[RMDB]
RNA sequence: GGGAACGACUCGAGUAGAGUCGAAAACUCCAUGUUCGCAUGGAGAAAAAGCGUACUACCCUAGAGGUCCAUUGAGUCACGCUCCCAAAUAGGAGCGUUGACAAUGAUGUGGACUACCCACCUAGGGUAUCGCAAAAAACUGUCGUUCGCGACAGAAUCUCGGUUAAAGAUUCGUCUUUAACCGAGAAAAAGAAACAACAACAACAAC
Reactivity to 2A3 in 0.01 (KOAc 150mM, MgCl2 10mM, bicine 150mM(pH8.5), 24C), signal-to-noise 2, nucleotides 027 to 156: c000u000c000c000a000u000g060u090u100c260g030c140a000u000g060g020a000g060a120a040a040a010a000g000c000g010u040a040c060u000a000c040c000c020u000a010g010a010g000g030u010c000c010a000u010u020g050a000g000u000c000a000c010g000c000u050c010c020c000a080a160a040u240a090g010g000a020g010c000g050u050u140g000a000c010a020a080u060g010a010u180g000u000g000g000a000c000u000a020c010c030c000a050c000c000u000a000g000g060g000u000a000u030c020g000c000a000a020a000a190a000a130c010u010g000u000c010g000u080u110c300g000c020g100a000c000a000g000a010a070
Reactivity to DMS in 0.01 (KOAc 150mM, MgCl2 10mM, bicine 150mM(pH8.5), 24C), signal-to-noise 1, nucleotides 027 to 156: c030u020c000c010a020u010g010u010u000c220g100c010a000u000g000g000a010g010a020a020a100a120a120g000c020g050u010a000c070u000a040c000c000c020u000a000g010a050g010g010u000c000c000a000u000u000g010a080g010u000c000a050c000g030c040u030c000c040c010a000a200a180u000a030g030g000a050g030c010g030u000u000g020a050c010a100a100u020g000a040u030g020u010g000g000a030c000u000a060c020c000c030a300c110c020u010a030g010g010g020u000a090u000c000g040c000a020a120a060a050a050a090c000u000g000u000c010g030u000u020c190g000c020g020a050c000a000g030a070a090

Description:
Structure probing data (2A3 and DMS) for a 207-nucleotide construct. Conditions: 150 mM KOAc, 10 mM MgCl2 and 150 mM bicine (pH 8.5), 24 C. Values cover nucleotides 27 to 156. The data come from the RNA Mapping Database (RMDB), library RNAMAK. DMS adducts were read by reverse transcription with MarathonRT.